[RMDB]
RNA sequence: GGGAACGACUCGAGUAGAGUCGAAAACUUUUACAGUAAGGACUUCAACUGACCUUCCUCAGACUGAGGACUGUUCCAGUGUAUACAUCAAGUCACUGAGGUAGGACAAAAGGUUGCUACAGUCCUAGUCUGAAAACCCAUUCGUGGGUUUUCAGACAAAAGAAACAACAACAACAAC
Reactivity to DMS in 0.01 (KOAc 150mM, MgCl2 10mM, bicine 150mM(pH8.5), 24C), signal-to-noise 1, nucleotides 027 to 126: c030u000u000u000u010a140c120a080g020u010a160a040g040g020a010c020u000u000c000a050a000c030u000g010a100c000c020u000u000c010c010u020c050a070g010a070c100u020g020a020g010g050a030c080u000g010u000u000c160c030a070g000u000g000u000a070u010a010c120a130u000c050a060a160g000u000c040a090c100u000g000a020g040g000u000a000g000g000a110c070a060a030a090a300g000g010u000u000g050c300u000a050c150a030g000u000c010c000u000a080
Reactivity to 2A3 in 0.01 (KOAc 150mM, MgCl2 10mM, bicine 150mM(pH8.5), 24C), signal-to-noise 1, nucleotides 027 to 126: c000u230u100u130u150a070c050a050g030u220a220a000g020g060a010c000u040u010c030a020a030c020u040g030a030c000c000u000u020c000c000u000c000a030g050a120c060u070g030a020g080g080a020c010u080g130u200u080c060c000a080g010u060g030u130a070u060a220c080a070u110c020a100a000g020u000c020a000c130u000g000a000g000g020u020a010g000g000a000c060a020a110a000a030g020g020u030u000g020c010u040a060c000a020g000u000c000c000u010a010

This 177-nucleotide RNA was probed chemically with DMS and 2A3. The reactions ran in a buffer of 150 mM KOAc, 10 mM MgCl2 and 150 mM bicine (pH 8.5), at 24 C. DMS adducts were read by reverse transcription with MarathonRT. The DMS profile rests on 666 reads.